[RMDB]
RNA sequence: GGGAACGACUCGAGUAGAGUCGAAAACAACACCCGAAUCUUAGGGUGCUGCAAGGCUUUCAGAGCGACACGCCGGGUGCCGUAGUCGACGGGACGGCGGUUGUCCGGGUCGACCAGGCUGUCGUCCACGCUAUGAUUUUUUCGAAAAUCAUAGCGUAAAAGAAACAACAACAACAAC
Reactivity to 2A3 in 0.01 (KOAc 150mM, MgCl2 10mM, bicine 150mM(pH8.5), 24C), signal-to-noise 7, nucleotides 027 to 126: c010a000a010c000a000c000c000c010g050a130a150u130c120u200u230a100g020g000g000u000g010c000u020g010c040a100a150g030g000c020u020u120u120c100a070g040a050g120c020g020a030c040a040c160g050c000c000g060g000g120u110g100c020c020g020u030a050g110u090c060g070a190c070g050g070g040a010c010g020g050c000g060g000u080u150g030u000c000c010g030g000g010u040c010g020a110c000c010a040g090g020c060u030g030u040c020g020u020c010c010
Reactivity to DMS in 0.01 (KOAc 150mM, MgCl2 10mM, bicine 150mM(pH8.5), 24C), signal-to-noise 9, nucleotides 027 to 126: c030a030a050c020a030c000c000c000g010a140a130u010c260u010u010a120g000g000g010u000g000c010u000g000c060a130a210g000g000c040u000u000u000c060a160g010a120g010c020g010a030c040a060c140g020c010c000g000g020g010u000g010c020c020g010u000a100g010u000c070g010a050c060g010g000g000a040c010g010g010c050g010g000u000u010g020u000c010c010g000g020g010u000c010g000a060c040c060a140g000g010c030u000g000u000c030g010u000c040c040
Structure probing data (2A3 and DMS) for a 177-nucleotide construct. It was measured as part of the RMDB library OK2TST. For DMS, 18,664 sequencing reads were counted. The RNA was probed in 150 mM KOAc, 10 mM MgCl2 and 150 mM bicine (pH 8.5) at 24 C. DMS adducts were read by reverse transcription with MarathonRT.